Conditions: 150 mM KOAc, 10 mM MgCl2 and 150 mM bicine (pH 8.5), 24 C. Chemical mapping of a 207-nucleotide RNA with DMS and 2A3. The 2A3 profile rests on 2,271 reads. It was measured as part of the RMDB library OK3TST. For DMS the reverse transcriptase was MarathonRT.
[RMDB]
RNA sequence: GGGAACGACUCGAGUAGAGUCGAAAAACAGAGCAGCAUUGCUGCCAAUAUGUCUCGCCUCCUGCCACAGGGCGGCUUUUCUCCUAUCUCAGAAUUGAACAAAUGUACAAUCGGGUUUUAUACCGAAACAUUCAGUUCCCAGGGGCAGGCAGGAGAAGUAUUACCGAUACUUCGGUAUCGGUAAUACAAAAGAAACAACAACAACAAC
Reactivity to DMS in 0.01 (KOAc 150mM, MgCl2 10mM, bicine 150mM(pH8.5), 24C), signal-to-noise 1, nucleotides 027 to 156: a110c060a120g000a070g020c060a030g040c110a180u000u000g040c000u000g010c000c020a080a100u000a080u000g000u000c040u000c020g010c090c010u010c000c010u010g080c010c060a060c040a150g020g020g030c010g020g030c030u010u000u000u000c000u000c030c010u000a180u000c150u040c010a080g010a040a050u010u000g000a100a080c020a080a050a030u000g020u000a140c100a060a200u000c040g020g030g000u010u020u000u020a130u010a080c010c000g010a090a120a060c040a070u000u000c040a080g010u000u000c000c020c040a120g030g010g040g030c070a050g030g010c050a040g010g010a050g010a020a300
Reactivity to 2A3 in 0.01 (KOAc 150mM, MgCl2 10mM, bicine 150mM(pH8.5), 24C), signal-to-noise 4, nucleotides 027 to 156: a000c070a020g060a040g050c000a010g010c160a260u020u300g010c000u000g000c000c010a100a060u170a080u190g070u030c040u020c060g040c010c010u000c010c000u010g000c020c000a050c020a060g040g020g000c010g000g010c000u020u010u010u010c010u020c010c060u140a180u180c090u010c080a020g020a080a040u030u020g020a080a010c030a050a050a030u050g010u080a080c100a090a130u020c020g000g060g000u100u100u210u210a090u170a070c000c000g010a050a040a000c000a000u020u050c010a000g020u160u130c000c010c030a010g030g000g010g010c030a010g000g030c030a010g010g020a030g010a080a040